[RMDB]
RNA sequence: GGGAACGACUCGAGUAGAGUCGAAAAGAUAUGGACGACGGGAGGAGUAUUUCGGAAACGAAAUAUACUCCGAGGAUCGUCGGUCCUAAGUCAAAGAUAUCCUUAUACUUCGGUAUAAGGAUAUCAACCAUGAUGAUAACUUCGGUUAUCAUCAUGGAAAAGAAACAACAACAACAAC
Reactivity to DMS in 0.01 (KOAc 150mM, MgCl2 10mM, bicine 150mM(pH8.5), 24C), signal-to-noise 5, nucleotides 027 to 126: g010a060u000a300u000g000g010a090c000g010a020c010g020g000g010a050g020g010a030g030u000a010u000u000u000c000g000g000a120a120a220c000g010a010a010a030u010a070u010a040c020u000c000c000g020a070g010g010a060u010c010g000u000c000g010g010u020c000c010u010a040a090g000u000c040a080a110a150g000a010u000a000u000c000c000u000u000a010u000a010c010u000u000c150g030g030u000a000u000a000a000g000g000a000u000a000u000c000a110a110
Reactivity to 2A3 in 0.01 (KOAc 150mM, MgCl2 10mM, bicine 150mM(pH8.5), 24C), signal-to-noise 3, nucleotides 027 to 126: g010a030u090a050u110g000g010a010c010g000a000c000g030g010g000a000g020g010a000g020u000a000u020u010u000c010g000g050a050a070a040c010g020a010a040a000u300a030u030a040c000u000c020c020g000a030g000g010a020u020c010g000u000c020g010g090u050c010c000u020a120a050g060u050c060a220a060a040g000a000u000a000u010c010c000u000u000a000u000a010c020u030u100c300g150g000u000a000u000a010a000g010g000a000u000a000u000c000a000a000
Structure probing data (DMS and 2A3) for a 177-nucleotide construct. DMS adducts were read by reverse transcription with MarathonRT. The reactions ran in a buffer of 150 mM KOAc, 10 mM MgCl2 and 150 mM bicine (pH 8.5), at 24 C. The data come from the RNA Mapping Database (RMDB), library TTRDEL. 2A3 adducts were read by reverse transcription with SuperScript II with manganese.